Source: RMDB library M2PK90, as collected in RNAgym.
Structure probing data (2A3 and DMS) for a 177-nucleotide construct.
For DMS, 7,921 sequencing reads were counted.
The reactions ran in a buffer of 150 mM KOAc, 10 mM MgCl2 and 150 mM bicine (pH 8.5), at 24 C.
For 2A3, 1,989 sequencing reads were counted.
[RMDB]
RNA sequence: GGGAACGACUCGAGUAGAGUCGAAAAUUUAAGAGCGUAGAUGUCUCUGUCACGAUACGAGUAAGUGACUCUCGUGUACUACUGACGAAUGUGACAGAGACAUUUAUGCUCAGUGUCAGUCAAGGAACACAGGAGAAAGUUUCGACUUUCUCCUGUGAAAAGAAACAACAACAACAAC
Reactivity to 2A3 in 0.01 (KOAc 150mM, MgCl2 10mM, bicine 150mM(pH8.5), 24C), signal-to-noise 2, nucleotides 027 to 126: u160u130u060a180a050g000a020g000c000g010u010a000g010a040u040g000u000c000u000c010u010g010u000c000a000c020g050a010u050a110c020g020a020g020u020a260a090g070u130g210a060c010u030c000u050c120g140u130g010u070a040c010u020a030c020u070g150a040c030g050a150a030u120g000u010g010a000c000a000g000a000g000a010c000a000u000u000u000a000u000g010c030u000c010a010g000u000g000u000c020a010g020u060c070a070a100g090g000a080a010
Reactivity to DMS in 0.01 (KOAc 150mM, MgCl2 10mM, bicine 150mM(pH8.5), 24C), signal-to-noise 5, nucleotides 027 to 126: u010u010u010a130a120g000a010g010c010g030u000a000g010a000u000g000u000c000u000c000u000g000u000c000a010c010g010a090u000a110c020g010a110g000u000a040a050g010u000g010a060c050u010c200u020c190g000u000g010u000a020c030u000a040c020u000g000a130c050g000a110a060u010g010u000g000a020c010a020g000a010g000a000c000a000u000u000u010a000u000g010c000u000c000a020g010u010g000u000c080a080g010u010c100a070a090g000g000a110a170